An RNA of 177 nucleotides, treated with 2A3 and DMS and read out base by base. DMS adducts were read by reverse transcription with MarathonRT. Source: RMDB library M2PK50, as collected in RNAgym.

[RMDB]
RNA sequence: GGGAACGACUCGAGUAGAGUCGAAAACUUGCAAACUUCGGUUUGCAAGAAACAACGCUGCGGCGAGCAGCAGCCAGAGAAGGCAACACAAUCGCCAUAAAAAAAUCUAUGAGUUCGCUCAUAGAAAGUUAUCAAUUGUGUUCGCACAAUUGAUAACAAAAGAAACAACAACAACAAC
Reactivity to 2A3 in 0.01 (KOAc 150mM, MgCl2 10mM, bicine 150mM(pH8.5), 24C), signal-to-noise 2, nucleotides 027 to 126: c000u000u000g000c000a000a000a000c000u020u050c140g080g000u030u000u020g000c000a000a010g000a000a010a000c010a020a030c090g000c010u010g000c010g030g000c010g020a060g060c000a000g000c000a010g010c000c000a050g060a040g040a300a060g030g010c020a040a050c070a010c030a060a090u030c010g000c010c020a040u300a020a200a030a010a010a010a060u010c000u000a000u010g000a010g020u010u120c240g040c080u020c000a000u010a000g000a010a030a000
Reactivity to DMS in 0.01 (KOAc 150mM, MgCl2 10mM, bicine 150mM(pH8.5), 24C), signal-to-noise 2, nucleotides 027 to 126: c000u000u000g000c020a000a000a000c000u000u000c200g030g000u000u000u000g000c000a010a000g000a100a060a100c080a090a080c120g020c000u000g000c030g000g020c010g020a050g030c000a000g000c010a130g020c000c000a100g000a120g020a140a080g010g010c010a090a050c090a100c160a020a120u010c040g000c020c020a160u060a000a010a030a090a080a150a050u000c000u000a000u000g000a010g000u000u010c220g010c010u010c000a000u000a000g000a010a070a110